About this RNA:
An RNA of 207 nucleotides, treated with 2A3 and DMS and read out base by base.
[RMDB]
RNA sequence: GGGAACGACUCGAGUAGAGUCGAAAAACAGCGAAAGGCACAAGACUUCGACCAUUAUAGCAGUUAGUAGUUGCCUAAACCCAUUGCAAUAUAUGGGACAGUAGAGGUCGCAAGCCUAUACUGUGCGAAAAGUCGCAAGGUUUCGACCUUGCGACAAUGUAGUCAUCUACUUCGGUAGAUGACUACAAAAAGAAACAACAACAACAAC
Reactivity to 2A3 in 0.01 (KOAc 150mM, MgCl2 10mM, bicine 150mM(pH8.5), 24C), signal-to-noise 3, nucleotides 027 to 156: a000c020a000g010c030g100a170a050a000g050g010c030a010c020a060a040g060a020c030u060u020c060g110a090c040c050a170u200u120a170u300a100g040c100a020g030u020u090a020g030u070a000g010u120u070g020c000c000u080a090a010a020c010c000c000a000u000u030g000c000a040a000u020a010u030a000u180g010g020g020a000c000a000g010u020a000g020a010g030g010u110c050g030c180a070a010g000c000c000u010a000u010a010c000u000g020u020g010c000g070a040a050a060a010g000u000c000g000c010a000a000g010g000u000u060u120c130g080a020c000c000u000u000g000c010g000a000c000a000a000
Reactivity to DMS in 0.01 (KOAc 150mM, MgCl2 10mM, bicine 150mM(pH8.5), 24C), signal-to-noise 1, nucleotides 027 to 156: a070c070a210g000c050g020a060a170a110g000g040c030a090c100a140a120g040a040c020u020u010c010g010a220c050c050a180u030u000a110u010a060g060c000a150g000u000u000a090g040u010a160g010u000u020g030c000c050u000a040a020a070c000c020c000a060u010u010g000c070a070a110u000a110u010a020u000g020g000g010a060c080a060g060u000a000g010a030g090g070u000c050g000c290a060a260g000c000c010u020a030u000a020c000u000g030u000g000c070g000a080a050a030a150g000u000c000g040c000a020a010g000g000u010u000u000c300g010a050c000c000u000u000g020c010g020a000c000a000a010

DMS (dimethyl sulfate) methylates the pairing face of unpaired adenines and cytosines. For 2A3 the reverse transcriptase was SuperScript II with manganese.